Structure probing data (2A3) for a 177-nucleotide construct. The reactions ran in a buffer of 150 mM KOAc, 10 mM MgCl2 and 150 mM bicine (pH 8.5), at 24 C. It was measured as part of the RMDB library RFMREP.

[RMDB]
RNA sequence: GGGAACGACUCGAGUAGAGUCGAAAAGUGCAAAGAUAAACCAUUGUUCUCUGUUGAUCAGUGACUUAAUGUUUGCUUUGGAGAAUGAUAUUUUCCCUUUCCUAUAUUUGACUUUUGUUCUAAAAGUGUAAUUUAAUCUCUUCGGAGAUUAAAUUACAAAAGAAACAACAACAACAAC
Reactivity to 2A3 in 0.01 (KOAc 150mM, MgCl2 10mM, bicine 150mM(pH8.5), 24C), signal-to-noise 1, nucleotides 027 to 126: g130u030g010c010a090a040a000g000a160u080a070a000a020c030c010a040u010u000g020u130u010c030u000c130u230g250u280u150g110a080u030c030a000g000u000g030a000c000u010u190a060a020u080g050u080u010u000g030c000u080u120u040g040g060a080g040a100a020u070g110a030u000a160u110u030u030u110c010c000c110u000u000u000c020c040u110a130u040a010u300u180u110g070a070c010u120u040u000u170g050u040u070c010u080a040a040a040a080g120u030